This 177-nucleotide RNA was probed chemically with 2A3 and DMS. DMS adducts were read by reverse transcription with MarathonRT. The 2A3 profile rests on 1,080 reads. Values cover nucleotides 27 to 126. The RNA was probed in 150 mM KOAc, 10 mM MgCl2 and 150 mM bicine (pH 8.5) at 24 C. 2A3 adducts were read by reverse transcription with SuperScript II with manganese. For DMS, 2,251 sequencing reads were counted.
[RMDB]
RNA sequence: GGGAACGACUCGAGUAGAGUCGAAAAUGAUUGCUCGUGAUGGAAUCAUCGUGACAAGUGUCAUAGUUGGAGGGGUGUGGAUGCUAUACUCUUGGUUCACCAAUUCAGUUAAUGAAGUCCGACAUCAACUAGCCAUGAGGUUCGCCUCAUGGCUAGUAAAAGAAACAACAACAACAAC
Reactivity to 2A3 in 0.01 (KOAc 150mM, MgCl2 10mM, bicine 150mM(pH8.5), 24C), signal-to-noise 2, nucleotides 027 to 126: u090g000a020u000u020g120c040u090c080g090u060g000a010u070g020g230a070a060u080c020a020u070c120g090u020g000a010c040a090a060g080u080g040u270c010a080u050a090g050u000u020g090g040a050g040g080g020g040u120g010u060g050g000a020u120g000c000u010a000u000a080c000u000c000u030u110g050g000u050u040c000a010c070c000a040a030u080u090c070a030g040u060u090a030a090u100g030a050a000g050u050c050c000g000a000c040a100u020c040a020
Reactivity to DMS in 0.01 (KOAc 150mM, MgCl2 10mM, bicine 150mM(pH8.5), 24C), signal-to-noise 2, nucleotides 027 to 126: u010g020a060u000u000g010c060u010c050g020u000g000a020u000g060g020a140a070u030c000a030u000c070g050u030g010a040c030a150a050g000u000g010u050c020a070u020a070g030u000u000g000g000a050g000g010g020g000u000g060u000g000g000a080u040g000c030u010a050u000a020c000u000c050u000u030g020g000u040u020c100a070c030c050a060a050u000u000c100a000g030u020u030a120a030u000g000a050a180g020u010c020c000g010a070c030a000u050c080a030